[RMDB]
RNA sequence: GGGAACGACUCGAGUAGAGUCGAAAAUAGCUGCAACAUUAUUUGAGUAUCCUGAAAACGGGCUUUUCAGAAUGGUGUUGCCGUAUAAAAUUGUAGAAGUGCAUAGUGGCCCGUAUAGCAGGCAUUAGAGAGCUACAGAUGUUCGCAUCUGUAGCAACGUAGUGUAUUGCUUCGGCAAUACACUACGAAAAGAAACAACAACAACAAC
Reactivity to DMS in 0.01 (KOAc 150mM, MgCl2 10mM, bicine 150mM(pH8.5), 24C), signal-to-noise 1, nucleotides 027 to 156: u010a200g000c020u010g000c010a030a030c010a050u000u040a080u000u000u010g020a230g030u010a080u000c010c010u000g010a030a040a070a180c050g000g040g070c100u000u010u010u010c010a030g000a030a040u000g000g030u000g020u000u010g000c000c120g060u000a110u030a040a060a020a150u000u010g090u000a090g010a090a300g010u010g010c020a060u000a090g000u000g010g000c000c000c030g030u000a040u000a120g070c030a070g010g030c010a120u000u000a080g000a180g000a200g030c000u000a000c010a000g020a020u010g040u000u010c260g060c010a020u000c000u010g010u000a030g020c020a000a000
Reactivity to 2A3 in 0.01 (KOAc 150mM, MgCl2 10mM, bicine 150mM(pH8.5), 24C), signal-to-noise 2, nucleotides 027 to 156: u060a000g020c010u020g040c000a000a010c000a000u030u060a100u050u070u010g060a050g100u120a100u160c010c000u030g060a060a000a000a030c040g030g040g000c000u100u070u110u090c100a130g010a200a050u030g000g000u010g000u000u030g000c030c000g040u050a090u060a050a090a010a040u130u120g050u060a030g050a250a000g090u020g150c010a030u070a020g080u040g070g000c000c030c040g030u090a070u000a050g030c060a020g000g030c010a030u000u040a040g020a010g000a060g030c000u000a000c000a000g010a000u010g040u010u110c200g030c050a000u000c000u020g000u000a000g000c000a000a020

Description: Chemical mapping of a 207-nucleotide RNA with DMS and 2A3. For 2A3, 722 sequencing reads were counted. The reactions ran in a buffer of 150 mM KOAc, 10 mM MgCl2 and 150 mM bicine (pH 8.5), at 24 C. The DMS profile rests on 1,876 reads.